[RMDB]
RNA sequence: GGGAACGACUCGAGUAGAGUCGAAAAGAAACGACGUAAGGCCUCUGAACGUCGCAGGCAGAAAUAUAGGAAACCUGAGGAAACAGGAACACGCAACGUAUGCCAUAAAAGAACUAGAGGCAAGAAAGAGGUAGCCAUAUUUCGAUAUGGCUACCUCAAAAGAAACAACAACAACAAC
Reactivity to DMS in 0.01 (KOAc 150mM, MgCl2 10mM, bicine 150mM(pH8.5), 24C), signal-to-noise 1, nucleotides 027 to 126: g000a050a080a300c000g000a000c000g000u000a090a050g000g050c000c000u000c010u000g000a050a000c000g020u000c140g080c050a040g000g000c000a090g000a080a230a030u030a140u040a100g010g000a040a280a000c010c000u000g000a300g000g060a050a150a150c000a000g010g000a020a190c300a060c000g040c050a080a040c150g020u000a040u060g000c000c010a220u000a020a000a010a040g000a000a070c080u060a000g000a020g000g000c000a040a010g000a060a170a000
Reactivity to 2A3 in 0.01 (KOAc 150mM, MgCl2 10mM, bicine 150mM(pH8.5), 24C), signal-to-noise 3, nucleotides 027 to 126: g200a020a050a000c010g010a000c000g000u040a060a010g170g000c000c000u000c010u000g050a060a030c000g000u000c000g010c030a030g000g030c000a000g090a080a120a050u190a040u110a070g110g050a170a030a070c000c000u040g020a110g030g300a140a060a020c000a000g020g010a020a020c040a050c050g070c050a010a010c090g050u020a040u040g000c010c000a020u100a050a150a020a010g070a010a000c010u010a100g000a000g020g000c000a000a020g030a000a050a000
Structure probing data (DMS and 2A3) for a 177-nucleotide construct.
The 2A3 profile rests on 2,556 reads.
The data come from the RNA Mapping Database (RMDB), library OK1LIB.
For DMS the reverse transcriptase was MarathonRT.